[RMDB]
RNA sequence: GGGAACGACUCGAGUAGAGUCGAAAAUUUAAAGAUAUGGAAGUGAACUACAGCCGUAGACUCUAUAAUCUCUGAUCGGAAACGAUCAGAGGUAGAGUUCAAGGCUGCACUUCCUAAGUCAUGGUAAGAGAUAUUAGCAGUUCGCUGCUAAUAUCUCAAAAGAAACAACAACAACAAC
Reactivity to DMS in 0.01 (KOAc 150mM, MgCl2 10mM, bicine 150mM(pH8.5), 24C), signal-to-noise 2, nucleotides 027 to 126: u000u000u020a100a120a140g000a020u000a300u010g000g000a020a020g010u030g020a210a030c110u000a300c020a030g020c010c000g000u010a290g010a010c000u000c000u000a050u010a300a180u010c020u000c000u000g000a000u010c010g030g000a120a100a160c010g010a000u010c010a010g010a020g000g000u000a000g000a000g030u000u000c060a300a300g000g000c000u000g000c000a030c010u000u000c000c010u000a020a060g020u000c030a060u000g040g010u000a030a060
Reactivity to 2A3 in 0.01 (KOAc 150mM, MgCl2 10mM, bicine 150mM(pH8.5), 24C), signal-to-noise 2, nucleotides 027 to 126: u170u070u070a200a100a060g040a000u050a040u220g000g000a000a000g000u010g030a090a050c100u180a050c300a010g040c010c010g260u300a000g000a010c010u010c000u020a120u080a300a300u300c010u000c000u000g020a010u000c000g030g060a080a060a000c010g000a000u000c000a010g000a000g000g000u000a000g000a000g000u040u050c000a000a000g000g000c010u000g000c000a000c000u010u000c010c010u000a030a030g000u000c040a100u160g210g000u240a260a010